[RMDB]
RNA sequence: GGGAACGACUCGAGUAGAGUCGAAAAUAUAAUAAAUGUAAACUCAGUGUGUAUUCGCAGUGCGCUUACCUAAUUAUUUCUUUAAAUAACCGUAUAUUGGCUGCCUAAUGAAAGAGUCUCAUUAUCUGAUACACGGACUUUACGUCACUGGAUUACAAUCGUAUUAAUGGUUCGCCAUUAAUACGAUAAAAGAAACAACAACAACAAC
Reactivity to 2A3 in 0.01 (KOAc 150mM, MgCl2 10mM, bicine 150mM(pH8.5), 24C), signal-to-noise 4, nucleotides 027 to 156: u100a000u040a000a180u090a100a060a070u080g020u010a090a100a050c050u060c080a070g030u020g010u030g010u080a100u070u140c070g000c110a030g050u050g100c040g000c040u030u080a090c030c020u030a180a140u090u090a180u060u160u050c060u070u170u150a100a150a100u080a080a050c010c000g020u040a050u020a050u140u080g040g010c030u040g020c000c040u050a080a050u090g080a050a070a060g070a050g030u020c020u010c040a030u040u070a090u060c100u070g040a030u020a060c030a000c030g020g010a020c020u100u110u070a040c100g030u070c010a020c050u020g000g030a020u050u070a020c050a050
Reactivity to DMS in 0.01 (KOAc 150mM, MgCl2 10mM, bicine 150mM(pH8.5), 24C), signal-to-noise 2, nucleotides 027 to 156: u000a120u000a030a110u000a080a050a100u000g010u000a020a060a010c030u000c020a040g010u000g020u040g010u000a050u000u000c040g000c050a030g010u000g020c090g010c060u000u000a020c020c050u000a080a070u010u000a040u000u000u000c000u000u000u000a060a050a090u000a040a070c000c020g050u000a120u000a090u000u010g010g070c060u010g030c040c080u020a040a080u000g030a050a070a110g000a110g020u000c050u010c050a080u010u010a040u000c080u020g010a110u000a020c040a050c020g020g000a110c060u000u000u000a020c070g000u000c010a030c040u020g000g050a070u000u000a060c050a080